[RMDB]
RNA sequence: GGGAACGACUCGAGUAGAGUCGAAAAUACGACCUCGUCUACCGCGACCCCGACGAGUUCAACGAGGCCGUCGGCGAUGUCGUCGAAACGCUGCUCGAGCGCAACGAACUCGCGAUCGGAGAUGUCGUACUAUGCUCGGAUUCGUCCGAGCAUAGUAAAAAGAAACAACAACAACAAC
Reactivity to DMS in 0.01 (KOAc 150mM, MgCl2 10mM, bicine 150mM(pH8.5), 24C), signal-to-noise 5, nucleotides 027 to 126: u000a090c020g000a020c010c110u000c010g010u000c060u000a110c090c040g020c030g010a100c050c030c010c010g020a100c070g000a080g020u000u000c030a150a140c100g010a040g010g020c040c030g000u000c050g020g010c040g000a140u010g010u000c020g020u000c020g010a070a080a060c040g010c040u000g010c060u010c040g000a110g010c030g010c170a090a120c130g010a030a050c020u000c010g000c210g010a040u010c030g000g020a150g000a080u000g010u000c020g000
Reactivity to 2A3 in 0.01 (KOAc 150mM, MgCl2 10mM, bicine 150mM(pH8.5), 24C), signal-to-noise 4, nucleotides 027 to 126: u150a010c020g020a030c000c040u030c030g070u010c040u080a110c040c000g030c040g060a090c000c000c000c030g030a080c010g010a020g000u020u050c050a090a040c030g020a040g020g010c020c010g040u020c000g010g030c010g080a130u250g160u270c020g000u000c010g020a040a040a020c050g030c080u060g020c000u010c010g060a050g030c050g020c080a050a050c100g020a010a010c010u000c020g000c060g090a100u070c030g050g020a080g010a070u130g030u030c010g010